Source information: Structure probing data (DMS and 2A3) for a 207-nucleotide construct. Source: RMDB library OK3TST, as collected in RNAgym. Conditions: 150 mM KOAc, 10 mM MgCl2 and 150 mM bicine (pH 8.5), 24 C. DMS adducts were read by reverse transcription with MarathonRT.

RNA sequence: GGGAACGACUCGAGUAGAGUCGAAAAGACUGUGAAUCCUCCACCGAAACCAGCAAGAGGUAUAUUGCAUACCCAGUUAGUUAUGAGUGUGGUUGGAUCAGUUCAAAUGCGUACAAAUAAUGGCAAAUCCAACCAAAGGUUCAGAUUAAACCCUAGCAACCAAACAUUAAUUCGUUAAUGUUUGGUUAAAAGAAACAACAACAACAAC
Reactivity to DMS in 0.01 (KOAc 150mM, MgCl2 10mM, bicine 150mM(pH8.5), 24C), signal-to-noise 3, nucleotides 027 to 156: g030a090c050u000g010u000g020a080a090u010c010c000u000c060c010a100c020c040g000a160a090a050c020c010a090g010c040a090a120g010a120g030g030u010a070u000a140u000u010g040c150a060u000a050c000c000c010a260g060u000u000a030g010u000u000a090u000g000a110g010u010g030u010g030g030u000u010g010g030a010u000c020a080g030u000u000c050a050a090a100u000g010c060g020u000a300c090a070a080a130u000a080a140u010g040g010c020a100a070a120u000c010c010a020a020c020c020a070a090a080g010g000u000u000c030a060g000a130u010u000a080a080a060c000c000c010u010a080g000c100
Reactivity to 2A3 in 0.01 (KOAc 150mM, MgCl2 10mM, bicine 150mM(pH8.5), 24C), signal-to-noise 5, nucleotides 027 to 156: g010a010c030u020g020u050g170a050a070u030c000c010u010c030c000a020c010c040g090a100a050a050c030c010a020g030c070a150a030g100a140g050g060u030a030u010a020u020u250g050c040a010u010a030c010c000c010a010g030u030u070a010g000u020u040a070u270g080a100g070u120g010u030g040g000u030u020g000g000a010u020c030a030g020u070u090c030a040a050a050u110g050c060g020u090a070c060a070a100a050u190a110a090u140g070g000c020a110a040a030u000c000c010a010a020c010c010a050a050a020g020g000u020u040c020a010g010a070u060u090a050a090a100c010c010c020u030a010g050c010